[RMDB]
Structure probing data (2A3 and DMS) for a 170-nucleotide construct. Source: RMDB library 15KLIB, as collected in RNAgym. Conditions: 150 mM KOAc, 10 mM MgCl2 and 150 mM bicine (pH 8.5), 24 C.
RNA sequence: GGGAACGACUCGAGUAGAGUCGAAAAUUCCUAGGUCCGGAGUCUACCUCCAUCUGGUCCGUCCGGGCCCUCUUCGCCGGAGGCGCCCCCUCCCCGUCCUUAUCCUUCUUUCCAAGUAUUCCUUUGAUCCCGUAGCUCUUCGGAGCUACGAAAAGAAACAACAACAACAAC
Reactivity to 2A3 in 0.01 (KOAc 150mM, MgCl2 10mM, bicine 150mM(pH8.5), 24C), signal-to-noise 7, nucleotides 027 to 129: u040u010c010c000u020a060g020g020u030c030c010g010g010a030g030u030c060u110a080c020c020u030c010c030a100u050c080u080g010g020u050c030c020g050u040c030c020g010g010g010c010c010c000u040c020u110u080c050g060c060c050g050g020a040g020g000c070g020c000c000c000c010c000u000c000c000c000c000g040u020c010c000u030u060a080u070c010c000u030u040c000u010u020u000c010c000a050a030g030u030a120u030u080c000c000u030u040u080g070a080u070c020c010
Reactivity to DMS in 0.01 (KOAc 150mM, MgCl2 10mM, bicine 150mM(pH8.5), 24C), signal-to-noise 6, nucleotides 027 to 129: u040u010c020c010u010a020g020g030u030c040c050g040g000a020g030u040c120u010a160c000c000u040c070c020a030u030c040u040g000g040u020c070c070g000u040c060c050g010g010g010c040c030c030u030c040u000u000c050g070c050c110g020g000a050g000g000c150g000c060c020c020c030c000u000c000c000c000c000g040u000c020c000u020u010a170u000c030c020u000u000c070u000u000u000c030c010a050a130g040u000a090u000u030c000c000u010u030u030g010a120u040c000c020
DMS adducts were read by reverse transcription with MarathonRT.